[RMDB]
RNA sequence: GGGAACGACUCGAGUAGAGUCGAAAAAUUUGUACCUCAAACCUCAGCAUCAUACUAUAAACCCAGAUAACAAACUUGCACAUGUACCCCUGAGUUUAAAAUAAAAGAGGCCAGGUACCAUGGCUCACACCUGAAAUCCCAACACUUUGGGAGGCUACCUACCGAUAUAGUUCGCUAUAUCGGUAGGAAAAGAAACAACAACAACAAC
Reactivity to 2A3 in 0.01 (KOAc 150mM, MgCl2 10mM, bicine 150mM(pH8.5), 24C), signal-to-noise 1, nucleotides 027 to 156: a000u070u050u140g000u020a070c080c000u070c090a190a050a050c050c030u040c080a000g030c010a060u060c000a030u070a190c090u060a080u090a190a040a040c030c010c010a010g060a190u190a110a060c090a150a170a000c050u080u220g000c120a040c000a160u050g040u090a050c000c000c040c000u000g000a000g000u000u020u040a000a100a120a120u130a000a110a070a030g110a000g000g020c030c000a000g030g000u030a000c010c010a110u040g000g000c000u040c110a030c000a010c000c010u030g010a070a060a110u110c000c000c000a040a000c080a070c250u090u080u000g000g000g000a000g000g000c000u000a040